[RMDB]
RNA sequence: GGGAACGACUCGAGUAGAGUCGAAAACUGGAGUGUAGACCUGUGUGUGGGACCUGCUCCAGGCUGAUCCCUGUCCGCACAGGUGGGUGAUGUCCUUGGCUGCUGCCGUCAGAGGCAGCCCCCUGCAAUCCGUUGUGACAUUCGUGUCACAACGGAUAAAAGAAACAACAACAACAAC
Reactivity to DMS in 0.01 (KOAc 150mM, MgCl2 10mM, bicine 150mM(pH8.5), 24C), signal-to-noise 3, nucleotides 027 to 126: c020u000g000g010a020g020u000g030u010a060g010a120c010c000u000g010u010g020u000g000u010g000g010g000a090c090c080u000g010c010u000c030c040a020g010g010c180u000g000a120u020c010c010c010u010g010u000c080c060g040c070a040c040a060g000g020u000g000g040g020u000g010a100u010g000u010c010c020u000u020g020g010c080u010g010c010u000g000c010c000g000u010c250a080g000a170g000g000c000a010g010c000c020c000c000c020u000g010c160a200
Reactivity to 2A3 in 0.01 (KOAc 150mM, MgCl2 10mM, bicine 150mM(pH8.5), 24C), signal-to-noise 1, nucleotides 027 to 126: c010u020g040g020a000g020u120g010u230a040g080a110c000c000u040g020u030g030u030g050u260g150g020g040a050c030c030u050g010c000u010c030c020a010g030g000c080u130g040a090u000c020c000c000u010g080u020c000c000g000c020a030c030a080g030g010u040g000g040g010u110g030a160u080g060u070c000c000u090u090g080g000c020u090g000c010u000g000c100c030g050u050c090a050g010a160g120g020c020a000g000c000c000c000c020c000u040g020c060a010
Chemical mapping of a 177-nucleotide RNA with DMS and 2A3. The RNA was probed in 150 mM KOAc, 10 mM MgCl2 and 150 mM bicine (pH 8.5) at 24 C. For 2A3, 2,065 sequencing reads were counted.